[RMDB]
RNA sequence: GGGAACGACUCGAGUAGAGUCGAAAACAAAUUGUCCUUUGUGACCAAAGUCAAACCCGAGUACAUUCUCGGUAAAGAUGCUGCUGCUGUAUGUGAGAUAUCGGAGGUCGUACGCGCGGCAUACAUCAUUCACACAUGUAUAGAUAGACCCGGUGUCUAACUCAGUUCAGUUCGCUGAACUGAGUUAAAAAGAAACAACAACAACAAC
Reactivity to DMS in 0.01 (KOAc 150mM, MgCl2 10mM, bicine 150mM(pH8.5), 24C), signal-to-noise 3, nucleotides 027 to 156: c050a040a080a130u020u010g000u010c030c050u010u000u000g000u010g020a040c050c050a060a120a190g030u010c050a070a160a170c230c020c020g000a030g030u010a170c190a180u000u010c000u010c040g010g030u000a050a080a140g000a090u020g020c020u000g000c000u000g030c000u000g000u010a040u000g010u000g000a150g040a070u000a030u000c050g020g040a180g030g020u000c030g000u010a040c070g020c060g010c040g030g050c030a060u000a020c040a080u020c080a070u000u010c130a100c100a080c090a040u000g000u000a050u010a110g000a080u000a070g000a080c010c020c010g000g020u000g000u000c040
Reactivity to 2A3 in 0.01 (KOAc 150mM, MgCl2 10mM, bicine 150mM(pH8.5), 24C), signal-to-noise 4, nucleotides 027 to 156: c060a000a080a050u090u110g040u030c030c000u140u150u240g150u210g050a070c040c040a080a080a030g070u090c050a030a050a080c030c000c010g010a020g020u140a180c090a230u230u090c000u000c000g040g000u070a060a040a040g050a020u040g010c010u000g000c020u020g000c020u080g010u130a070u040g120u080g090a020g010a080u060a020u070c070g000g070a070g160g030u020c030g020u010a040c020g010c000g000c000g070g010c010a000u040a070c020a050u120c020a010u100u200c070a030c000a020c020a120u090g040u090a070u040a130g130a050u050a050g030a010c000c010c010g040g000u050g000u010c030
Chemical mapping of a 207-nucleotide RNA with DMS and 2A3. Values cover nucleotides 27 to 156. DMS adducts were read by reverse transcription with MarathonRT. Conditions: 150 mM KOAc, 10 mM MgCl2 and 150 mM bicine (pH 8.5), 24 C. 2A3 adducts were read by reverse transcription with SuperScript II with manganese. Source: RMDB library OK3TST, as collected in RNAgym.